[RMDB]
RNA sequence: GGGAACGACUCGAGUAGAGUCGAAAAGUGCGACAUUUCGAUGUCGCACAAACCCAAAUGGUGGCACCUAACAAAACAAGCCGGGAAAAGCCAGAUGCCAACGUCCUUAGCCCUUCGGGGCUAAGAAUAACGAUGAGUUUUUCGAAACUCAUCGUUAAAAAGAAACAACAACAACAAC
Reactivity to 2A3 in 0.01 (KOAc 150mM, MgCl2 10mM, bicine 150mM(pH8.5), 24C), signal-to-noise 2, nucleotides 027 to 126: g010u000g000c000g000a010c020a000u010u050u070c150g130a010u010g000u000c000g000c000a000c000a000a000a000c000c010c000a030a070a020u130g010g010u000g010g010c040a240c120c010u070a190a030c050a090a150a020a000c040a140a020g020c050c010g000g030g020a100a140a030a000g060c010c030a050g020a060u040g070c040c000a030a030c030g060u100c030c000u010u000a010g000c000c000c000u020u040c150g060g000g010g000c000u000a000a000g000a000a030
Reactivity to DMS in 0.01 (KOAc 150mM, MgCl2 10mM, bicine 150mM(pH8.5), 24C), signal-to-noise 2, nucleotides 027 to 126: g000u000g000c000g030a010c000a020u000u000u010c260g010a020u020g000u000c010g030c030a000c000a000a040a100c020c000c020a090a110a140u020g000g010u000g000g020c020a060c010c030u000a090a110c130a060a060a120a090c100a140a090g010c030c010g030g010g010a050a100a060a090g000c050c060a020g000a040u000g000c030c020a040a080c070g010u000c070c000u000u000a000g000c000c000c000u010u010c150g000g000g000g000c000u000a000a000g000a090a070
Chemical mapping of a 177-nucleotide RNA with 2A3 and DMS.
The DMS profile rests on 1,558 reads.
For DMS the reverse transcriptase was MarathonRT.